[RMDB]
RNA sequence: GGGAACGACUCGAGUAGAGUCGAAAACCGGGACUCUUCGGAGUCCCGGAAAACGCUCACGGCAGAGCGAAGCAAAGGCAAGGCACGGCCGAGUGCCUCGGAAAAUCAGAUAGUUCGCUAUCUGAAACGAGGUUAAUAAGUUCGCUUAUUAACCUCGAAAAGAAACAACAACAACAAC
Reactivity to 2A3 in 0.01 (KOAc 150mM, MgCl2 10mM, bicine 150mM(pH8.5), 24C), signal-to-noise 3, nucleotides 027 to 126: c000c000g000g010g010a020c040u040c040u120u120c280g060g000a000g000u000c000c000c000g000g000a000a000a000a000c000g000c000u010c020a050c090g240g000c140a070g010a000g050c000g010a060a010g050c070a100a040a070g150g010c050a030a010g000g000c010a000c070g100g040c080c020g030a030g020u010g000c000c000u000c000g070g070a070a080a010a140u020c000a010g000a010u000a000g020u010u050c190g000c090u000a010u010c000u000g000a010a000a000
Reactivity to DMS in 0.01 (KOAc 150mM, MgCl2 10mM, bicine 150mM(pH8.5), 24C), signal-to-noise 3, nucleotides 027 to 126: c000c010g000g010g030a030c000u000c000u000u010c150g010g020a020g020u010c000c000c030g000g010a010a020a100a140c070g020c020u000c000a090c120g020g000c070a150g000a030g000c010g020a120a110g040c130a040a080a110g010g000c080a080a050g000g000c010a030c020g010g020c100c080g000a200g010u000g010c000c000u000c050g020g000a100a090a100a120u010c010a000g000a000u000a000g010u010u030c190g000c020u000a020u000c000u000g000a010a070a160
This 177-nucleotide RNA was probed chemically with 2A3 and DMS. The RNA was probed in 150 mM KOAc, 10 mM MgCl2 and 150 mM bicine (pH 8.5) at 24 C. The 2A3 profile rests on 3,304 reads. 2A3 adducts were read by reverse transcription with SuperScript II with manganese. The DMS profile rests on 2,327 reads.